An RNA of 207 nucleotides, treated with 2A3 and DMS and read out base by base.
Reactivities are rounded to 0.1 and cut off at 0 and 3.
Source: RMDB library M2RFPK, as collected in RNAgym.
DMS adducts were read by reverse transcription with MarathonRT.
Reactivities are given for positions 27 through 156.
The RNA was probed in 150 mM KOAc, 10 mM MgCl2 and 150 mM bicine (pH 8.5) at 24 C.

[RMDB]
RNA sequence: GGGAACGACUCGAGUAGAGUCGAAAAACGAGGUACGCCUCGAAAAUAUGACCGGUGUCAUAGCCUCUAGCACACAGAGGUCGCGUGGGUUCAACUCCCCCCCUAUUCCGAGGGUAUCGGAAACCAAAAAACACAAUUUGGUUCGCCAAAUUGUGAAUCUUACGAUUAACUUCGGUUAAUCGUAAGAAAAAGAAACAACAACAACAAC
Reactivity to 2A3 in 0.01 (KOAc 150mM, MgCl2 10mM, bicine 150mM(pH8.5), 24C), signal-to-noise 4, nucleotides 027 to 156: a000c010g000a010g020g010u050a030c170g080c010c010u020c010g020a070a030a010a010u140a070u060g010a000c020c050g090g050u130g050u150c040a050u030a050g010c000c010u020c010u050a090g070c100a030c010a000c010a190g010a010g010g000u010c010g010c020g040u140g050g010g010u100u110c030a080a090c070u020c000c010c000c000c000c000c000u060a220u030u020c000c000g000a010g020g000g000u120a030u000c000g000g000a000a000a010c020c020a100a010a000a030a020a000c000a000c000a000a000u000u000u000g000g020u000u030c040g020c040c000a000a000a000u000u000g000u000g000a000a010
Reactivity to DMS in 0.01 (KOAc 150mM, MgCl2 10mM, bicine 150mM(pH8.5), 24C), signal-to-noise 2, nucleotides 027 to 156: a070c010g020a090g030g010u010a030c110g030c010c000u060c010g000a040a000a100a200u010a020u000g000a040c020c050g050g040u020g030u010c050a040u000a050g020c010c010u020c010u000a140g010c150a130c150a120c090a100g010a030g030g010u000c070g010c110g030u000g020g000g050u010u000c080a090a300c040u000c000c000c000c020c000c020c000u010a110u000u000c030c000g010a040g020g020g010u000a000u000c000g000g000a030a080a180c060c060a000a040a040a090a090a130c000a020c000a000a030u000u000u000g000g010u000u000c300g000c010c000a020a010a030u010u020g020u000g000a020a050